Chemical mapping of a 207-nucleotide RNA with DMS and 2A3. The DMS profile rests on 3,430 reads.
RNA sequence: GGGAACGACUCGAGUAGAGUCGAAAAAGACCACCUCUACGGAGGUGGUCAAGUCACGUAGCUAGUACCAGGUUGCAAUACUAGAUCGUUAGUCCUGGGGCGUACGGUGGCAGUACGCUGCCACCGAUAAAACUUGAAUACUUCGGUAUUCAAGUAAGAAACGUAAGAGAUUCGUCUCUUACGUUUCAAAAGAAACAACAACAACAAC
Reactivity to DMS in 0.01 (KOAc 150mM, MgCl2 10mM, bicine 150mM(pH8.5), 24C), signal-to-noise 2, nucleotides 027 to 156: a180g010a050c000c000a040c010c000u010c000u000a140c300g050g000a010g030g060u000g000g010u000c000a000a020g020u000c120a120c040g030u000a070g050c010u010a020g000u000a040c030c010a010g030g020u000u010g000c050a090a080u000a040c020u010a020g010a080u010c040g000u010u000a050g000u010c000c000u000g000g000g010g020c170g010u000a040c010g030g020u000g020g050c020a030g080u000a060c270g040c010u000g040c000c000a040c010c010g000a020u010a010a060a090a090c000u000u000g000a040a020u000a020c000u010u000c300g080g040u000a010u010u000c000a020a010g010u000a030a090
Reactivity to 2A3 in 0.01 (KOAc 150mM, MgCl2 10mM, bicine 150mM(pH8.5), 24C), signal-to-noise 2, nucleotides 027 to 156: a000g000a000c000c000a010c010c000u000c000u030a060c270g060g020a010g010g010u000g000g000u000c000a000a000g010u010c010a000c030g010u010a030g100c040u020a030g010u050a200c000c000a000g010g000u030u000g020c020a030a000u000a000c000u010a000g040a060u050c060g090u090u120a010g070u160c000c000u000g000g000g020g050c140g080u150a040c030g000g030u000g010g000c010a010g000u050a010c290g030c030u020g000c000c000a000c010c000g010a000u040a000a070a000a010c000u000u000g000a000a000u010a010c010u020u050c200g060g000u020a000u000u000c000a000a000g010u000a000a040
The data come from the RNA Mapping Database (RMDB), library M2RFPK. Conditions: 150 mM KOAc, 10 mM MgCl2 and 150 mM bicine (pH 8.5), 24 C. As a SHAPE reagent, 2A3 marks flexible, mostly unpaired nucleotides at the ribose 2'-OH.